Structure probing data (2A3 and DMS) for a 177-nucleotide construct.
For DMS, 4,055 sequencing reads were counted.
The RNA was probed in 150 mM KOAc, 10 mM MgCl2 and 150 mM bicine (pH 8.5) at 24 C.
For DMS the reverse transcriptase was MarathonRT.
The 2A3 profile rests on 6,829 reads.
[RMDB]
RNA sequence: GGGAACGACUCGAGUAGAGUCGAAAAUUCUGUUGUAAUCCAAACCAAGACCAAUCUGCACCAACUGAAUCCUAAAUUGAUUGCUCUCCAUUUCUUUUUAGGAGGAGGGUCGGGAGGCGGAGGCCACGCGAUAUCAUAGUUUCGACUAUGAUAUCGCAAAAGAAACAACAACAACAAC
Reactivity to 2A3 in 0.01 (KOAc 150mM, MgCl2 10mM, bicine 150mM(pH8.5), 24C), signal-to-noise 6, nucleotides 027 to 126: u060u010c040u030g030u040u020g030u060a110a070u080c080c030a110a030a060c040c040a090a010g070a090c030c010a050a150u020c010u010g010c000a010c060c000a050a100c030u060g020a030a040u010c000c000u010a030a040a020u030u030g040a030u040u070g040c050u070c020u040c180c030a060u040u120u030c010u000u020u000u000u020a010g000g010a020g010g010a030g020g040g040u020c080g040g010g020a080g140g000c000g020g010a000g010g010c000c030a070c090
Reactivity to DMS in 0.01 (KOAc 150mM, MgCl2 10mM, bicine 150mM(pH8.5), 24C), signal-to-noise 3, nucleotides 027 to 126: u030u010c030u010g010u000u000g000u000a120a110u050c060c030a010a080a120c090c100a060a180g000a070c020c030a060a130u000c010u000g000c050a080c020c030a050a100c000u000g000a300a090u000c010c020u020a010a010a020u000u000g010a030u010u010g000c170u030c070u030c080c000a120u000u010u000c030u010u020u010u000u000a010g000g000a000g020g010a200g010g000g000u020c130g000g000g010a060g000g000c010g000g000a050g000g010c010c070a110c190